[RMDB]
RNA sequence: GGGAACGACUCGAGUAGAGUCGAAAAUGAGCUGCUUUUCAAGAGCAAGAAGGGACUUUCCCUGAAUCAUUGAUACUUUCCAUGAUGGAGGGUGCAGCCUGGGAUAGUGCUGGUGGGGCCAGGAAGCCGUCGAGAAGGGAUUCGUCCCUUCUCGACGAAAAGAAACAACAACAACAAC
Reactivity to 2A3 in 0.01 (KOAc 150mM, MgCl2 10mM, bicine 150mM(pH8.5), 24C), signal-to-noise 1, nucleotides 027 to 126: u050g000a000g010c010u030g030c030u080u050u130u270c190a170a090g000a030g000c020a020a030g090a010a060g050g020g020a100c130u070u090u100c040c000c000u000g060a020a030u030c010a040u000u100g020a010u050a190c100u110u020u000c030c030a030u160g010a090u100g080g100a060g030g020g000u030g050c020a010g000c000c000u000g040g000g010a050u140a090g070u100g100c020u010g090g090u130g040g010g000g000c000c010a010g000g000a030a010g020c060
Reactivity to DMS in 0.01 (KOAc 150mM, MgCl2 10mM, bicine 150mM(pH8.5), 24C), signal-to-noise 2, nucleotides 027 to 126: u000g000a090g020c070u000g000c010u000u000u000u040c290a110a080g020a080g010c040a060a050g000a220a090g000g000g000a140c220u000u000u000c010c000c010u000g020a160a080u000c040a030u000u000g010a120u020a120c160u000u000u010c020c030a060u030g020a100u010g040g010a020g000g000g000u000g000c070a050g010c110c030u000g000g010g020a110u000a070g020u000g000c060u000g000g020u010g000g000g000g020c020c030a040g020g000a080a070g010c150